Notes:
Chemical mapping of a 177-nucleotide RNA with 2A3 and DMS. For DMS the reverse transcriptase was MarathonRT. Reactivities are given for positions 27 through 126. Conditions: 150 mM KOAc, 10 mM MgCl2 and 150 mM bicine (pH 8.5), 24 C. The data come from the RNA Mapping Database (RMDB), library OK1LIB. For DMS, 1,952 sequencing reads were counted.

RNA sequence: GGGAACGACUCGAGUAGAGUCGAAAAGAAAGUGUGCACUUGAUACCGCGUGACUUCGGUCACGUAGUGGCAACGCGCAGGACUUUGCUGCCACUUCUUAGUCCUGCGGUAUCUUGUGCUCACGAAAGCAUGGACCGAUAUUCGUAUCGGUCCAUGCAAAAGAAACAACAACAACAAC
Reactivity to 2A3 in 0.01 (KOAc 150mM, MgCl2 10mM, bicine 150mM(pH8.5), 24C), signal-to-noise 3, nucleotides 027 to 126: g130a030a070a010g000u000g010u010g020c000a020c000u000u000g000a000u000a010c000c000g000c000g000u010g000a000c000u040u090c250g110g020u040c030a010c030g000u010a020g000u010g020g020c040a090a060c030g000c000g000c040a010g010g020a030c000u050u030u040g020c060u100g050c040c010a130c040u090u030c000u010u020a000g000u000c000c000u010g000c000g000g000u000a000u000c000u010u010g000u000g000c010u010c000a000c000g010a060a010a000
Reactivity to DMS in 0.01 (KOAc 150mM, MgCl2 10mM, bicine 150mM(pH8.5), 24C), signal-to-noise 1, nucleotides 027 to 126: g000a230a070a060g040u000g000u010g060c020a020c000u010u020g000a010u000a000c000c010g020c010g020u000g070a000c010u000u070c130g000g000u000c000a000c030g020u010a000g100u000g020g010c180a090a170c000g000c020g000c020a010g010g000a020c060u040u020u040g000c170u060g090c040c020a020c000u000u090c010u000u000a030g000u000c000c020u000g000c010g000g000u000a000u000c000u000u020g000u000g020c000u010c000a000c000g010a110a040a020